[RMDB]
RNA sequence: GGGAACGACUCGAGUAGAGUCGAAAACAGCCCUUGACCAGGAAGGUACAACAGCUUUUCUAUACAGAGGACAUGGCCUCAAGAUUUGCUGAUGGGCUCUGCUUAUUUUGGAACUGUAAUGUACCAAUGAGUAUUCGCUUCGGCGAAUACAAAAGAAACAACAACAACAAC
Reactivity to 2A3 in 0.01 (KOAc 150mM, MgCl2 10mM, bicine 150mM(pH8.5), 24C), signal-to-noise 5, nucleotides 027 to 129: c070a030g000c000c000c000u070u100g090a040c060c020a040g090g040a140a050g070g010u020a020c020a050a010c000a010g000c000u100u040u010u000c000u020a070u010a050c020a030g010a010g010g030a020c020a070u060g000g040c000c030u080c050a070a070g050a150u080u100u120g000c020u090g050a080u050g000g050g010c000u050c000u000g010c020u020u060a060u060u180u070u050g010g010a010a000c000u000g020u100a050a180u040g000u000a000c000c000a010a040u070g020a030
Reactivity to DMS in 0.01 (KOAc 150mM, MgCl2 10mM, bicine 150mM(pH8.5), 24C), signal-to-noise 5, nucleotides 027 to 129: c200a120g000c060c000c030u040u020g040a110c090c020a000g060g030a110a070g010g040u020a040c030a090a150c010a000g010c130u030u020u000u010c040u050a050u100a100c170a050g010a050g020g010a160c040a060u010g020g030c030c130u060c130a160a070g020a010u080u020u040g020c020u030g000a000u030g020g020g030c040u010c030u030g020c130u000u000a080u020u020u010u040g000g010a060a110c000u000g030u010a080a090u050g000u100a040c030c030a100a060u000g030a120